[RMDB]
RNA sequence: GGGAACGACUCGAGUAGAGUCGAAAAUGCGCGAUACCGUGUGCUGCUCCACAAGUAACCCGACGACGGCACCGUCGCAGCACCCACAACAGCCGUCGCAACGCGCGUUCUCCGCGGGGAGUCGCUCAAUUAUACCGAGGUUCGCCUCGGUAUAAUUAAAAGAAACAACAACAACAAC
Reactivity to DMS in 0.01 (KOAc 150mM, MgCl2 10mM, bicine 150mM(pH8.5), 24C), signal-to-noise 7, nucleotides 027 to 126: u020g000c020g010c030g010a150u020a070c150c100g010u020g020u010g010c020u000g010c060u000c060c090a060c090a120a110g010u020a100a090c070c030c040g000a190c060g000a040c030g000g000c030a100c120c080g000u010c050g010c060a080g030c050a070c020c040c030a090c130a090a070c150a080g010c020c000g010u000c010g000c100a100a070c060g010c030g010c020g000u000u010c030u000c020c030g010c090g000g000g000g000a040g010u000c010g030c040u000c050
Reactivity to 2A3 in 0.01 (KOAc 150mM, MgCl2 10mM, bicine 150mM(pH8.5), 24C), signal-to-noise 9, nucleotides 027 to 126: u130g010c030g000c010g030a040u050a200c080c070g050u060g030u030g070c020u010g010c030u070c090c040a090c050a110a040g100u090a080a100c010c030c050g060a090c020g000a010c000g040g010c020a050c080c050g070u080c040g000c010a010g030c000a040c000c050c020a090c050a080a050c020a030g020c010c000g020u030c020g010c050a040a070c030g020c000g000c010g040u070u020c030u000c020c020g030c030g030g030g000g000a020g030u020c010g000c020u020c010